[RMDB]
RNA sequence: GGGAACGACUCGAGUAGAGUCGAAAAUUUACUGACCGAUUUUCGAAGCACACCCUCCAGUUCUCCAUCGAGUUCUGAGACUACCAUGACGGGAUUGAUGCAAUGAUAGGGGUAGAUUGCGAUGGUAGCACUACGCUUCAUUCGUGAAGCGUAGUGCAAAAGAAACAACAACAACAAC
Reactivity to DMS in 0.01 (KOAc 150mM, MgCl2 10mM, bicine 150mM(pH8.5), 24C), signal-to-noise 1, nucleotides 027 to 126: u000u060u000a000c020u000g000a210c000c000g000a110u000u000u090u000c020g000a080a180g000c070a000c060a060c020c000c000u020c080c100a050g050u000u000c000u000c090c030a270u000c120g020a220g040u000u030c000u010g030a110g030a110c080u000a090c060c110a020u000g000a120c190g000g000g010a000u050u000g000a200u000g000c040a030a000u000g000a090u030a060g000g010g000g000u010a030g000a090u000u000g000c000g000a100u040g010g010u040a100
Reactivity to 2A3 in 0.01 (KOAc 150mM, MgCl2 10mM, bicine 150mM(pH8.5), 24C), signal-to-noise 2, nucleotides 027 to 126: u070u110u110a060c050u020g140a010c030c070g020a070u000u000u060u250c070g000a140a000g000c030a000c000a050c050c000c000u070c000c020a090g000u060u020c000u050c100c000a300u060c110g000a050g010u000u000c020u040g120a140g040a090c060u070a110c000c030a080u150g030a120c180g020g020g030a020u030u100g040a040u040g050c090a020a000u180g130a110u140a000g000g010g000g050u060a030g030a030u000u020g060c010g050a050u010g030g120u100a010
Overview
The record gives the reactivity of an RNA of 177 nucleotides to DMS and 2A3. The DMS profile rests on 1,038 reads. The reactions ran in a buffer of 150 mM KOAc, 10 mM MgCl2 and 150 mM bicine (pH 8.5), at 24 C. It was measured as part of the RMDB library OK1LIB.